The record gives the reactivity of an RNA of 177 nucleotides to 2A3 and DMS. The data come from the RNA Mapping Database (RMDB), library TTRDES. The RNA was probed in 150 mM KOAc, 10 mM MgCl2 and 150 mM bicine (pH 8.5) at 24 C. For DMS, 3,692 sequencing reads were counted.

RNA sequence: GGGAACGACUCGAGUAGAGUCGAAAAAAAAAGAUAUGGAGCAUACUUCGCUUGGAUUUAUGGGUUUCGCCCAUUCGGAAACGAAUGGGUGAUCCCAUUGUCAGCGAAGUGCUCCUAAGUCAAAAAACUGUAAUGAUUAGUUCGCUAAUCAUUACAGAAAAGAAACAACAACAACAAC
Reactivity to 2A3 in 0.01 (KOAc 150mM, MgCl2 10mM, bicine 150mM(pH8.5), 24C), signal-to-noise 3, nucleotides 027 to 126: a020a000a010a020a000g100a060u140a050u150g010g000a000g010c000a060u080a290c020u000u000c000g010c040u130u250g170g010a060u300u300u230a020u040g030g040g050u040u120u100c010g020c010c010c010a000u000u000c000g020g020a050a090a110c000g010a010a010u000g030g000g020u000g000a010u020c000c000c010a000u000u010g000u000c010a020g000c000g010a010a010g000u000g000c000u000c000c000u000a020a020g020u030c040a000a000a050a100a130a190
Reactivity to DMS in 0.01 (KOAc 150mM, MgCl2 10mM, bicine 150mM(pH8.5), 24C), signal-to-noise 3, nucleotides 027 to 126: a030a050a050a090a050g010a050u000a300u000g000g000a010g020c000a120u000a110c010u000u000c000g020c000u000u010g020g000a020u000u000u000a010u000g010g010g000u000u000u000c010g010c010c000c000a010u010u010c000g000g000a140a090a130c000g010a020a000u000g000g000g020u010g000a000u000c010c000c000a000u000u000g010u000c010a020g000c010g010a010a010g010u000g000c000u010c000c000u000a010a050g000u010c020a010a070a100a070a110a140